An RNA of 177 nucleotides, treated with 2A3 and DMS and read out base by base. For 2A3 the reverse transcriptase was SuperScript II with manganese. Values cover nucleotides 27 to 126. The reactions ran in a buffer of 150 mM KOAc, 10 mM MgCl2 and 150 mM bicine (pH 8.5), at 24 C.
RNA sequence: GGGAACGACUCGAGUAGAGUCGAAAAUUGCCUGGUGAAAUGUUUUGUUAAAAAUAGUCGGCUCAGAAUCUGACGUGGCUAACAACGAUGAUUAAGCCAGCCAUGAAAUUAUUAACUUGUAAAAAGAGAGUCAUAAAUACUUCGGUAUUUAUGACUCAAAAGAAACAACAACAACAAC
Reactivity to 2A3 in 0.01 (KOAc 150mM, MgCl2 10mM, bicine 150mM(pH8.5), 24C), signal-to-noise 4, nucleotides 027 to 126: u120u070g070c030c030u010g000g010u040g080a210a160a100u030g030u070u100u030u010g020u010u030a060a040a030a040a000u060a160g000u000c000g030g010c030u000c150a090g070a270a180u040c010u030g010a010c000g000u010g010g000c010u040a020a000c020a010a000c120g080a070u180g030a040u100u060a030a000g000c020c000a010g010c010c010a030u040g080a050a100a070u110u140a030u100u160a070a100c100u060u050g060u210a010a160a000a000a000g210a040
Reactivity to DMS in 0.01 (KOAc 150mM, MgCl2 10mM, bicine 150mM(pH8.5), 24C), signal-to-noise 2, nucleotides 027 to 126: u000u030g010c270c010u010g010g030u010g010a080a100a020u000g040u000u000u000u010g010u000u060a030a030a200a130a100u000a020g000u000c030g020g100c070u000c170a130g000a060a020u000c010u000g000a090c040g010u000g000g000c260u000a020a020c100a020a070c080g000a050u020g000a030u000u020a040a260g000c000c000a000g000c180c040a020u010g000a100a010a060u000u000a100u050u040a130a060c110u000u000g010u010a050a030a080a080a160g000a190
It was measured as part of the RMDB library OK1LIB.